[RMDB]
RNA sequence: GGGAACGACUCGAGUAGAGUCGAAAAGAGGGCUCACCGUCCGCCUCGGUCGCGGAGACGGACGGGACAUCCAACAGCGACUGGGAUCGUCAUCUCGGCUUGUUCGCGUGACCGAGAGAUCCGAGCAGAGACACAGCGAACUGCACACGGAGAAGCCGCCAGGUUACUAGUUCGCUAGUAACCUGGCAAAAGAAACAACAACAACAAC
Reactivity to 2A3 in 0.01 (KOAc 150mM, MgCl2 10mM, bicine 150mM(pH8.5), 24C), signal-to-noise 1, nucleotides 027 to 156: g070a030g020g010g040c030u110c190a000c010c000g010u010c000c010g010c020c000u020c000g000g000u000c010g000c000g000g000a010g000a010c000g020g010a000c000g020g000g010a000c000a000u210c230c130a000a000c040a010g000c000g020a000c030u000g000g000g000a010u000c010g010u020c010a030u010c000u000c000g000g020c020u130u260g000u020u010c040g000c030g020u020g000a020c000c000g010a000g000a000g000a000u020c000c000g010a010g010c190a000g030a020g000a010c020a020c070a120g030c000g030a000a000c010u010g000c060a080c000a040c040g030g050a140g020a210a030g060c050c030